[RMDB]
RNA sequence: GGGAACGACUCGAGUAGAGUCGAAAACUUCUACGCAGAGAAGCGUGGUGGCCCUCAGUUCCGUGGUUGGGAUGAGUCGAGGUACACCCUCGCGGCAAUCGUCAACGCGGUGCGGGCGCUCCAGUACCGACAACAACCUAUUCGUAGGUUGUUGUCGAAAAGAAACAACAACAACAAC
Reactivity to DMS in 0.01 (KOAc 150mM, MgCl2 10mM, bicine 150mM(pH8.5), 24C), signal-to-noise 3, nucleotides 027 to 126: c070u000u010c030u000a040c080g030c070a120g030a150g010a110a080g020c040g020u000g000g050u000g030g010c020c020c010u000c090a120g010u010u000c020c010g020u000g010g010u010u010g010g000g010a010u010g010a250g010u000c000g000a030g000g030u000a160c300a140c290c000c000u000c000g020c010g000g000c130a150a030u000c020g010u000c010a010a020c020g000c020g000g020u000g000c110g000g010g030c070g000c040u000c040c030a110g000u010a100c160
Reactivity to 2A3 in 0.01 (KOAc 150mM, MgCl2 10mM, bicine 150mM(pH8.5), 24C), signal-to-noise 3, nucleotides 027 to 126: c010u120u020c010u020a020c030g020c080a020g060a030g050a300a020g040c030g000u030g010g000u020g000g020c000c020c000u030c070a090g050u120u050c010c000g060u120g080g070u140u010g020g020g000a010u020g030a030g030u170c010g000a000g000g040u120a120c080a150c100c030c000u000c000g020c020g020g020c080a070a080u030c040g210u090c090a000a010c010g000c010g000g000u010g000c010g000g000g010c090g010c040u010c000c010a030g040u080a070c030

Chemical mapping of a 177-nucleotide RNA with DMS and 2A3. The RNA was probed in 150 mM KOAc, 10 mM MgCl2 and 150 mM bicine (pH 8.5) at 24 C. Source: RMDB library OK2TST, as collected in RNAgym. Values cover nucleotides 27 to 126.